[RMDB]
RNA sequence: GGGAACGACUCGAGUAGAGUCGAAAAAUCAGAGGGCGCUAUCAUGCAAACUAGGAUUGUCUGCGCAUGCACAGAACCAACUACCGAUAACUAACAGUGCAUGAAGGUUAGUUAUUCCAUAUUAAUUAAAACUCGUAAUUCUUCGGAAUUACGAGAACGUUCCUUCUAGCUUCGGCUAGAAGGAACGAAAAGAAACAACAACAACAAC
Reactivity to 2A3 in 0.01 (KOAc 150mM, MgCl2 10mM, bicine 150mM(pH8.5), 24C), signal-to-noise 3, nucleotides 027 to 156: a000u070c060a020g010a060g030g050g000c020g000c040u100a110u270c080a080u280g000c000a030a070a050c000u040a000g030g050a000u030u050g060u070c040u060g010c030g010c000a020u020g010c020a020c000a000g110a160a000c040c030a070a090c060u130a080c080c070g010a000u000a000a000c000u000a000a000c000a030g030u020g090c010a000u000g050a060a040g110g000u020u000a000g000u010u000a020u070u050c020c000a070u100a080u190u300a170a110u100u090a020a110a070a120c010u000c000g000u000a000a000u000u000c000u000u020c090g120g020a000a000u000u000a000c000g000a000g010a000a000